[RMDB]
RNA sequence: GGGAACGACUCGAGUAGAGUCGAAAAGAUAAGCUAGCAGCAAAAAGGAACCGAUUCCCACCAAGUUCGGAAAGAGAUACCGGGCGAGGCGCUGAAGAAAGAAUCUCGCUUCAGACACCCCAAGGAAAUGACCUUAAAAUGUUCGCAUUUUAAGGAACUAAUGGUUCUGAUUCGUCAGAACCAUUAGAAAAGAAACAACAACAACAAC
Reactivity to 2A3 in 0.01 (KOAc 150mM, MgCl2 10mM, bicine 150mM(pH8.5), 24C), signal-to-noise 2, nucleotides 027 to 156: g020a080u140a060a030g020c030u080a030g000c050a000g000c020a040a050a030a060a110g070g020a030a040c050c040g100a120u040u040c000c000c000a020c020c000a070a010g010u040u020c010g030g050a140a100a040g080a060g000a020u070a120c020c020g030g000g000c000g000a010g010g000c100g000c040u030g000a060a040g050a050a150a020g070a090a130u040c080u040c120g000c010u000u020c020a030g020a070c010a070c010c000c000c070a030a020g060g050a060a080a140u160g020a070c010c000u000u000a010a010a000a000u010g010u030u040c210g000c080a000u000u000u000u000a000a000g010g010a010a000
Reactivity to DMS in 0.01 (KOAc 150mM, MgCl2 10mM, bicine 150mM(pH8.5), 24C), signal-to-noise 1, nucleotides 027 to 156: g020a080u010a100a080g010c050u000a100g020c090a120g000c050a030a080a110a100a080g000g020a050a180c020c050g020a060u000u000c020c030c000a140c090c030a130a190g030u000u000c030g010g010a070a110a140g020a100g000a150u010a090c020c030g000g000g040c010g000a110g000g000c020g030c040u010g010a080a070g040a090a050a100g030a090a050u000c060u000c050g010c000u050u000c010a040g000a300c050a060c000c000c000c020a040a190g020g000a050a090a130u010g010a170c000c000u020u000a000a020a030a000u000g000u000u020c160g000c000a040u010u010u010u010a020a020g000g000a050a160